[RMDB]
RNA sequence: GGGAACGACUCGAGUAGAGUCGAAAAGACAGCGCCCAACGCUUCACAACCUGAAAGAAGCGCCUGUUAUCAGGACGGUUGAUCCAUUUACCGGUUCAGACCUCUGCAAACACCGGGUUGCAGAACAUAGAGGGAAAUUUGUUCGCAAAUUUCCCAAGUUAAUAUCUUUGUUCGCAAAGAUAUUAACAAAAGAAACAACAACAACAAC
Reactivity to DMS in 0.01 (KOAc 150mM, MgCl2 10mM, bicine 150mM(pH8.5), 24C), signal-to-noise 3, nucleotides 027 to 156: g030a100c030a080g000c030g010c060c050c010a100a090c030g000c010u000u000c000a160c050a100a230c080c050u010g000a120a150a200g000a040a030g000c030g020c020c070u040g020u000u000a150u000c050a090g060g010a050c020g000g040u000u000g000a120u010c030c050a170u010u000u010a100c050c030g000g000u000u000c030a060g020a110c060c040u000c020u010g020c050a040a050a060c030a270c050c040g010g020g020u000u000g010c000a040g010a080a120c100a110u000a150g000a160g000g010g000a020a030a050u000u000u000g000u000u000c260g030c030a010a060a090u000u000u000c010c000c020a000a030
Reactivity to 2A3 in 0.01 (KOAc 150mM, MgCl2 10mM, bicine 150mM(pH8.5), 24C), signal-to-noise 5, nucleotides 027 to 156: g090a010c070a030g040c020g060c050c000c000a040a010c010g000c000u020u000c020a040c010a130a030c010c010u020g000a020a010a010g010a010a010g000c010g040c000c010u130g020u210u140a150u300c030a010g000g000a000c040g010g000u000u010g010a060u050c040c030a040u070u120u190a180c010c020g080g000u100u160c050a030g070a210c050c090u060c010u030g010c010a010a050a030c030a040c050c020g050g030g000u000u010g010c000a010g010a090a040c040a050u200a060g120a170g030g010g000a000a000a000u020u010u010g030u040u060c110g000c120a000a000a000u000u000u010c000c000c000a000a000